Structure probing data (2A3 and DMS) for a 177-nucleotide construct.

RNA sequence: GGGAACGACUCGAGUAGAGUCGAAAAAGGGGUCGUCUUAUAGCUACCAGCCCACAGGCAUUUAGUCUACGUUGGAGGUAAACAAAUACGGGUCCUGCUUAGGAGAAAAGAAAAACGUCUUACAGCCUAACAGUUUGUUUUUCGAAACAAACUGUUAAAAAGAAACAACAACAACAAC
Reactivity to 2A3 in 0.01 (KOAc 150mM, MgCl2 10mM, bicine 150mM(pH8.5), 24C), signal-to-noise 9, nucleotides 027 to 126: a000g040g020g000g100u020c010g010u000c040u060u190a140u060a080g020c010u030a040c000c020a050g100c010c000c000a030c010a010g010g020c010a020u120u100u270a100g010u000c010u040a060c070g020u030u030g020g010a030g030g000u050a050a070a040c040a020a090a020u120a040c020g020g010g080u030c000c000u020g020c040u060u050a030g030g040a040g050a030a080a030a020g160a030a140a040a010a000c020g010u000c010u020u050a040c020a020g030c010c010
Reactivity to DMS in 0.01 (KOAc 150mM, MgCl2 10mM, bicine 150mM(pH8.5), 24C), signal-to-noise 9, nucleotides 027 to 126: a060g010g000g000g000u000c020g010u000c060u000u000a070u020a120g010c090u000a080c040c020a110g020c040c010c060a060c120a060g010g000c030a100u020u030u040a080g010u010c020u000a100c180g010u010u000g010g010a190g000g010u010a030a060a130c130a060a070a080u020a050c070g000g000g000u000c020c020u000g000c060u000u010a040g000g010a070g000a040a040a050a090g010a040a060a050a070a090c150g000u000c020u000u000a070c090a080g010c050c050
2A3 adducts were read by reverse transcription with SuperScript II with manganese. Conditions: 150 mM KOAc, 10 mM MgCl2 and 150 mM bicine (pH 8.5), 24 C.